The record gives the reactivity of an RNA of 177 nucleotides to DMS and 2A3. The RNA was probed in 150 mM KOAc, 10 mM MgCl2 and 150 mM bicine (pH 8.5) at 24 C.

RNA sequence: GGGAACGACUCGAGUAGAGUCGAAAAACAAAAACGCGAAUGCGAAUAAAAGAAACAGAAAGUCGCACAACCAGACUCCCCGAGGCGAUACAAGUGUAUACACGUACUCAGAUCUGAACAUCGAUGGUCAAGCCCAUCUUUUCGAAGAUGGGCUUGAAAAAGAAACAACAACAACAAC
Reactivity to DMS in 0.01 (KOAc 150mM, MgCl2 10mM, bicine 150mM(pH8.5), 24C), signal-to-noise 1, nucleotides 027 to 126: a300c100a040a000a090a100a010c070g000c040g000a130a040u080g050c000g020a000a070u020a000a100a110a050g000a180a010a020c120a070g010a060a010a060g000u060c000g000c050a000c010a170a080c100c090a030g010a150c030u000c000c060c000c000g070a210g000g000c040g030a000u020a050c040a100a010g020u000g000u020a050u020a040c100a300c010g000u000a040c050u040c070a090g000a040u070c000u010g000a010a090c170a070u020c050g000a000u070g000g000
Reactivity to 2A3 in 0.01 (KOAc 150mM, MgCl2 10mM, bicine 150mM(pH8.5), 24C), signal-to-noise 1, nucleotides 027 to 126: a000c000a000a000a020a000a000c070g100c000g010a130a010u180g030c000g110a000a000u210a000a160a000a070g270a000a150a000c000a090g160a100a060a000g070u090c000g010c000a010c000a110a020c040c010a000g100a000c050u050c000c000c000c000g040a060g050g000c000g000a000u070a090c030a140a140g000u030g100u210a060u040a000c150a090c020g000u070a130c090u040c090a010g000a190u080c000u000g070a000a000c000a070u030c020g040a000u120g000g020
For 2A3 the reverse transcriptase was SuperScript II with manganese.